[RMDB]
RNA sequence: GGGAACGACUCGAGUAGAGUCGAAAAACUUCCUACUUCGGUAGGAAGUAAAAGUAGAAAAGUUGGUGCUUAGACCACGCCCUCAACCGUAAUAAUAGAUAAACCCUUAGCACUUCGGUGCUAAGAAGAUACUGUACGACUUCGGUCGUACAGUAUCAAAAGAAACAACAACAACAAC
Reactivity to 2A3 in 0.01 (KOAc 150mM, MgCl2 10mM, bicine 150mM(pH8.5), 24C), signal-to-noise 2, nucleotides 027 to 126: a000c000u000u000c000c000u000a000c000u010u010c080g070g010u010a010g000g070a000a000g000u010a000a000a000a000g040u060a020g120a020a060a030a000g050u090u040g010g000u050g030c120u190u090a040g020a060c020c000a000c000g050c000c000c020u000c010a040a060c080c040g030u010a150a000u090a220a030u070a180g120a050u100a100a070a070c010c000c060u000u020a010g000c010a000c000u030u040c260g070g020u000g000c000u000a000a000g000a000a010
Reactivity to DMS in 0.01 (KOAc 150mM, MgCl2 10mM, bicine 150mM(pH8.5), 24C), signal-to-noise 2, nucleotides 027 to 126: a040c000u000u000c000c010u010a010c000u010u010c220g030g010u000a000g010g010a000a010g010u000a000a080a020a110g000u000a070g000a030a040a030a060g010u000u000g020g000u000g000c220u010u000a110g010a030c030c020a000c060g000c030c000c000u030c040a090a050c090c070g030u020a040a050u000a030a050u010a060g020a130u000a070a060a050c180c050c000u010u000a010g020c000a000c010u000u000c220g010g000u010g010c000u000a020a010g000a070a060

The record gives the reactivity of an RNA of 177 nucleotides to 2A3 and DMS. The 2A3 profile rests on 1,879 reads. For 2A3 the reverse transcriptase was SuperScript II with manganese.